[RMDB]
RNA sequence: GGGAACGACUCGAGUAGAGUCGAAAACGGUUACGCCUUUUUUACCGUUAUCAAGGAAGGUACUCGGCCAUGCUAAGGGAAGCAUUAUUCCUUAGGCGCAUGUCGCCGCCAGCAUGGUGUGAGGGGAAAAAGUAUGCUGGGUUCGCCCAGCAUACAAGCAUUGAGUGGAGUUCGCUCCACUCAAUGCAAAAGAAACAACAACAACAAC
Reactivity to 2A3 in 0.01 (KOAc 150mM, MgCl2 10mM, bicine 150mM(pH8.5), 24C), signal-to-noise 2, nucleotides 027 to 156: c000g000g070u080u070a040c040g030c030c000u020u000u010u000u100u130a030c110c040g090u070u060a060u110c060a010a000g090g010a020a020g000g010u060a070c000u000c030g030g000c000c000a000u000g000c000u050a060a110g000g000g040a050a000g000c060a110u070u110a170u300u070c020c000u060u030a040g000g000c010g000c050a200u170g120u180c100g000c020c030g020c030c020a000g000c010a000u000g000g020u040g090u070g030a040g090g030g030g050a030a040a000a000a000g000u000a010u000g010c000u000g000g020g060u000u030c080g080c010c000c000a000g000c000a000u000a000c000a000a020
An RNA of 207 nucleotides, treated with 2A3 and read out base by base. The RNA was probed in 150 mM KOAc, 10 mM MgCl2 and 150 mM bicine (pH 8.5) at 24 C.